RNA sequence: GGGAACGACUCGAGUAGAGUCGAAAAACACACAGUCUAGACUUUGGAAUAAAUGAAUGUGUUAGUGACUGAAUGGCAGGGGACAGGCAACUCCAUCCAUGAGCCCAGGGCAGGGAGGGCUUGCUGGGUGGGAGCCAUGUGCCUAUGGUCCUAUGGGGGAAUGAGAUCGAUUCGUCGAUCUCAUUCCAAAAGAAACAACAACAACAAC
Reactivity to 2A3 in 0.01 (KOAc 150mM, MgCl2 10mM, bicine 150mM(pH8.5), 24C), signal-to-noise 1, nucleotides 027 to 156: a000c040a000c000a010c040a050g000u000c020u070a070g030a080c030u000u090u150g020g090a130a080u070a120a100a080u160g110a090a010u080g080u000g010u000u040a050g010u040g090a060c030u020g020a060a020u100g000g040c030a010g040g000g020g030a010c000a040g020g000c000a020a070c020u000c020c000a040u000c000c000a010u060g040a010g020c010c020c040a000g000g110g000c050a020g020g020g030a130g000g000g060c070u010u020g050c050u060g040g060g040u210g020g010g000a000g020c000c000a040u090g010u050g000c050c000u040a070u070g060g000u050c000c010u020a060u060g000g020g000